[RMDB]
RNA sequence: GGGAACGACUCGAGUAGAGUCGAAAAAGCAGUUAUAUCGAAAAACGAUAUAACUGCAAUUAGGAUGGGGUGUGAUAGGUGGCACGGAGAAUUUUGGAUUCUCAGGGAUGGGUUCGAUUCUCAUAGUCCUAAAAGCAGUGUGUCAGAACGCACUGCAACUACUAUGAGGCUUCGGCCUCAUAGUAGUAAAAGAAACAACAACAACAAC
Reactivity to DMS in 0.01 (KOAc 150mM, MgCl2 10mM, bicine 150mM(pH8.5), 24C), signal-to-noise 1, nucleotides 027 to 156: a120g010c000a000g000u010u010a000u000a010u000c000g000a070a130a120a250a280c000g000a040u000a000u000a010a000c020u020g030c000a010a000u000u000a060g020g010a180u010g010g030g040g020u010g040u000g000a220u000a080g000g030u010g030g020c040a080c110g030g010a040g000a040a010u000u000u000u000g070g000a060u000u010c010u000c020a150g000g000g010a130u010g000g000g010u000u010c040g000a260u000u000c030u010c070a060u000a110g010u010c000c010u000a040a050a110a150g030c000a000g040u000g020u010g000u000c060a300g010a080a220c120g010c010a000c040u000g000c010a070
Reactivity to 2A3 in 0.01 (KOAc 150mM, MgCl2 10mM, bicine 150mM(pH8.5), 24C), signal-to-noise 3, nucleotides 027 to 156: a000g000c000a000g000u010u000a000u000a000u020c020g070a110a060a100a090a100c020g000a010u000a000u000a000a000c000u000g000c000a010a010u050u020a010g040g030a040u060g000g010g000g020u050g020u070g050a100u040a130g000g040u010g030g010c060a020c050g080g000a000g000a030a020u050u110u220u260g050g090a040u030u010c040u010c070a020g030g020g030a040u050g010g000g020u040u070c030g020a050u070u010c020u010c010a030u020a050g040u040c020c060u090a100a110a020a020g000c010a000g000u010g000u000g040u080c090a080g050a190a020c010g000c010a000c000u000g010c000a000

An RNA of 207 nucleotides, treated with DMS and 2A3 and read out base by base. The reactions ran in a buffer of 150 mM KOAc, 10 mM MgCl2 and 150 mM bicine (pH 8.5), at 24 C. Reactivities are rounded to 0.1 and cut off at 0 and 3.